[RMDB]
RNA sequence: GGGAACGACUCGAGUAGAGUCGAAAAGAAUGGCAACGGAGUCAACAAUGGCAAUGGGAAUACCAACUCGCAAGGCUGAUUUGGUAACUGCCUCAAGAAUAGGCUCGGCUCCCUAGGCAUCUGAGUCGCCGAGUAUAUGAUUCGUCAUAUACUCGGCAAAAGAAACAACAACAACAAC
Reactivity to DMS in 0.01 (KOAc 150mM, MgCl2 10mM, bicine 150mM(pH8.5), 24C), signal-to-noise 3, nucleotides 027 to 126: g010a090a060u010g000g000c010a060a170c300g000g020a100g000u000c040a030a090c140a130a080u010g000g020c080a090a160u000g020g010g000a130a130u000a050c010c020a000a030c090u000c000g020c030a150a110g010g020c070u010g010a010u000u020u020g000g010u000a040a100c100u000g000c040c000u000c150a110a080g000a060a100u000a080g000g000c090u020c140g020g000c030u000c010c010c030u010a170g000g020c040a040u000c030u000g000a080g000u010c130
Reactivity to 2A3 in 0.01 (KOAc 150mM, MgCl2 10mM, bicine 150mM(pH8.5), 24C), signal-to-noise 3, nucleotides 027 to 126: g040a050a040u110g030g030c020a020a030c040g050g020a010g000u020c040a040a040c070a090a230u160g050g000c020a020a050u060g050g010g070a090a030u060a030c020c000a020a050c010u010c010g050c070a150a170g230g000c130u110g040a050u020u020u010g020g000u020a080a050c080u040g010c000c010u050c040a050a080g030a130a110u130a130g070g000c010u010c060g000g030c020u030c000c010c010u010a030g060g000c010a030u000c050u060g080a050g070u050c060